Structure probing data (DMS and 2A3) for a 177-nucleotide construct.
[RMDB]
RNA sequence: GGGAACGACUCGAGUAGAGUCGAAAAUGGGGCGGCACAUCUGUUAAAUGAUAACACAGGUGUCCUAAGGUGAGCUCAAUGAGAACAGAAAUCUCAUGUAGAACAAAAGGGUAAAAGCUCACUUGAUUAACGGUUAUGAAUUCGUUCAUAACCGUUAAAAAGAAACAACAACAACAAC
Reactivity to DMS in 0.01 (KOAc 150mM, MgCl2 10mM, bicine 150mM(pH8.5), 24C), signal-to-noise 5, nucleotides 027 to 126: u010g010g010g010g030c110g000g000c150a020c000a010u010c000u010g010u000u020a050a150a100u030g000a190u010a070a090c230a030c020a020g020g020u000g000u010c020c030u000a050a030g000g000u000g010a000g010c010u000c050a190a010u010g000a000g000a030a060c140a130g010a130a150a090u010c000u010c010a000u000g000u010a090g000a120a100c180a060a030a100a080g020g000g000u020a050a070a080a070g010c000u000c000a000c010u010u000g000a150u020
Reactivity to 2A3 in 0.01 (KOAc 150mM, MgCl2 10mM, bicine 150mM(pH8.5), 24C), signal-to-noise 6, nucleotides 027 to 126: u070g000g000g000g020c050g020g010c050a010c000a020u010c000u000g000u000u080a130a150a090u270g140a140u130a200a020c040a000c000a050g030g000u000g010u020c000c000u030a030a050g020g000u000g000a000g000c000u000c050a030a010u010g000a000g010a110a060c110a120g130a130a150a080u000c000u010c000a010u020g050u120a040g020a120a010c060a080a090a040a010g080g040g070u140a090a100a040a000g000c000u010c000a000c000u010u050g070a050u000
Source information
The RNA was probed in 150 mM KOAc, 10 mM MgCl2 and 150 mM bicine (pH 8.5) at 24 C.